The record gives the reactivity of an RNA of 177 nucleotides to 2A3 and DMS. It was measured as part of the RMDB library OK2TST. As a SHAPE reagent, 2A3 marks flexible, mostly unpaired nucleotides at the ribose 2'-OH. Values cover nucleotides 27 to 126. The RNA was probed in 150 mM KOAc, 10 mM MgCl2 and 150 mM bicine (pH 8.5) at 24 C. For 2A3, 2,147 sequencing reads were counted.
[RMDB]
RNA sequence: GGGAACGACUCGAGUAGAGUCGAAAACGAUGCAGUUCUUCAGAAAGCUGACGCGCUCGGCAGCUCUGGCCAGUCGCUCUUCGGUCGGCGCGCGCGGAUCGGUGAAAUCGUCAAACACGUGGAAAGAAAUGGAAAUCAUGUUCGCAUGAUUUCCAUUAAAAGAAACAACAACAACAAC
Reactivity to 2A3 in 0.01 (KOAc 150mM, MgCl2 10mM, bicine 150mM(pH8.5), 24C), signal-to-noise 2, nucleotides 027 to 126: c020g040a040u100g000c030a030g040u050u050c010u090u060c030a080g140a100a080a010g030c020u010g020a030c020g020c000g000c070u070c040g030g000c020a050g000c010u020c050u090g030g040c000c040a060g050u100c050g010c070u020c010u140u050c030g030g020u020c000g040g000c030g010c000g000c020g000c000g060g020a050u070c020g000g020u020g010a050a050a020u090c040g040u060c020a000a070a090c090a000c080g050u060g060g050a160a050a030g040a030
Reactivity to DMS in 0.01 (KOAc 150mM, MgCl2 10mM, bicine 150mM(pH8.5), 24C), signal-to-noise 3, nucleotides 027 to 126: c060g010a050u000g020c090a090g020u000u010c050u010u000c080a110g000a110a140a120g010c020u000g010a110c060g020c100g020c060u010c070g000g020c060a090g000c040u000c060u000g010g010c020c030a090g000u000c060g000c080u000c070u000u000c070g010g030u000c040g020g010c070g020c100g010c070g000c050g000g000a040u000c040g010g020u010g010a070a070a060u000c060g000u000c080a060a060a090c140a060c110g000u000g000g020a100a060a050g010a050